Structure probing data (DMS and 2A3) for a 177-nucleotide construct. DMS (dimethyl sulfate) methylates the pairing face of unpaired adenines and cytosines. 2A3 adducts were read by reverse transcription with SuperScript II with manganese. The RNA was probed in 150 mM KOAc, 10 mM MgCl2 and 150 mM bicine (pH 8.5) at 24 C. Values cover nucleotides 27 to 126.
[RMDB]
RNA sequence: GGGAACGACUCGAGUAGAGUCGAAAACCGAAGAGGAAAGAAGGACGCGAGACGCGAACCUGUGAGUGGAAACCCGCUUUAUUCACUGGGGACGACAACUCUGGGGAGAGAAGGGAGGGUCGGAUGGCUAUAAUUAUUACUUCGGUAAUAAUUAUAGAAAAGAAACAACAACAACAAC
Reactivity to DMS in 0.01 (KOAc 150mM, MgCl2 10mM, bicine 150mM(pH8.5), 24C), signal-to-noise 5, nucleotides 027 to 126: c020c020g010a100a090g010a110g010g000a070a100a110g010a120a080g010g010a140c080g020c070g000a080g020a120c110g010c040g000a080a130c030c020u000g010u000g010a040g030u000g000g000a040a070a120c050c020c040g010c120u000u000u000a060u010u010c080a030c060u000g000g000g000g000a120c080g000a090c140a040a120c070u000c030u010g000g010g010g000a100g010a080g000a100a080g010g000g000a080g010g010g020u000c080g010g000a080u000g000g010
Reactivity to 2A3 in 0.01 (KOAc 150mM, MgCl2 10mM, bicine 150mM(pH8.5), 24C), signal-to-noise 2, nucleotides 027 to 126: c010c010g010a060a000g030a030g050g010a080a050a120g040a030a010g040g020a020c040g070c030g080a120g060a130c060g030c030g050a100a180c000c010u020g020u040g050a020g010u040g040g030a100a080a080c010c040c010g050c030u150u140u090a120u120u100c050a040c140u090g020g000g000g070a070c020g010a010c020a100a040c020u010c030u070g020g000g000g020a200g010a000g020a050a030g010g010g040a090g000g020g000u020c030g020g040a040u090g090g000